[RMDB]
RNA sequence: GGGAACGACUCGAGUAGAGUCGAAAAGAGCCAGACUUCGGUCUGGCUCAAAGUGGACGAGGAGCGCUGAACCCACACAAAACAAGACAGCGCAAAAUUAAAAAAGGUUCGACUUCGGUCGAACCAACCUCUUAAUAACCUUCGGGUUAUUAAGAGGAAAAGAAACAACAACAACAAC
Reactivity to DMS in 0.01 (KOAc 150mM, MgCl2 10mM, bicine 150mM(pH8.5), 24C), signal-to-noise 1, nucleotides 027 to 126: g010a000g020c000c000a020g000a040c000u010u000c160g060g010u000c000u000g000g000c000u000c000a000a000a090g020u000g000g030a160c030g010a110g020g000a110g000c000g020c030u000g000a210a110c060c000c000a020c020a180c160a040a000a020a010c090a010a050g010a180c030a020g000c020g030c020a050a030a080a050u000u000a010a040a140a070a190a090g010g010u000u000c000g000a020c000u000u000c250g070g000u010c000g000a000a020c000c000a020a020
Reactivity to 2A3 in 0.01 (KOAc 150mM, MgCl2 10mM, bicine 150mM(pH8.5), 24C), signal-to-noise 1, nucleotides 027 to 126: g000a000g010c030c010a000g010a000c000u050u130c210g010g010u000c010u000g000g090c000u000c000a010a000a000g000u000g010g010a010c060g070a050g110g100a170g050c010g000c020u000g010a070a100c040c130c000a030c010a000c010a040a220a020a010c020a050a000g100a030c020a010g000c020g000c040a080a050a020a040u110u030a030a010a000a030a070a030g000g000u000u010c000g000a010c020u040u090c290g030g000u000c010g000a000a000c000c000a000a000